An RNA of 177 nucleotides, treated with DMS and 2A3 and read out base by base. The reactions ran in a buffer of 150 mM KOAc, 10 mM MgCl2 and 150 mM bicine (pH 8.5), at 24 C. The DMS profile rests on 1,875 reads. Reactivities are given for positions 27 through 126. 2A3 adducts were read by reverse transcription with SuperScript II with manganese.
RNA sequence: GGGAACGACUCGAGUAGAGUCGAAAACCUGAGUAGGGCCGGGCACGUGAAACCCGGUCCGAAGCAGGGGGGACCACCCUCCAAGCCUGAAUACUCUCCUGUGACCGAUAGCGCACAAGUACCGUGAGAUUCAAACGAUCUUCGGAUCGUUUGAAUCAAAAGAAACAACAACAACAAC
Reactivity to DMS in 0.01 (KOAc 150mM, MgCl2 10mM, bicine 150mM(pH8.5), 24C), signal-to-noise 2, nucleotides 027 to 126: c010c010u040g070a050g010u020a100g000g000g030c000c000g030g000g000c070a040c220g020u020g010a070a050a120c000c000c010g000g000u000c000c000g000a040a140g060c140a150g000g030g000g000g000g040a140c100c300a060c070c000c040u000c010c070a070a090g000c030c030u000g000a120a200u000a060c030u000c010u010c120c070u000g050u000g000a050c000c070g000a010u000a150g000c020g010c050a020c100a160a010g000u010a170c010c040g000u000g000a110
Reactivity to 2A3 in 0.01 (KOAc 150mM, MgCl2 10mM, bicine 150mM(pH8.5), 24C), signal-to-noise 3, nucleotides 027 to 126: c000c010u000g020a020g040u020a040g000g000g000c000c000g010g000g000c090a020c160g160u180g140a060a070a040c010c000c000g000g000u020c000c000g000a000a000g010c030a000g000g000g000g000g040g030a120c010c000a130c020c030c000u020c000c000a040a010g030c000c020u050g020a070a040u110a130c010u030c000u040c010c020u050g030u060g110a070c010c000g080a080u090a040g050c030g000c030a010c020a110a010g020u020a080c010c020g040u020g060a100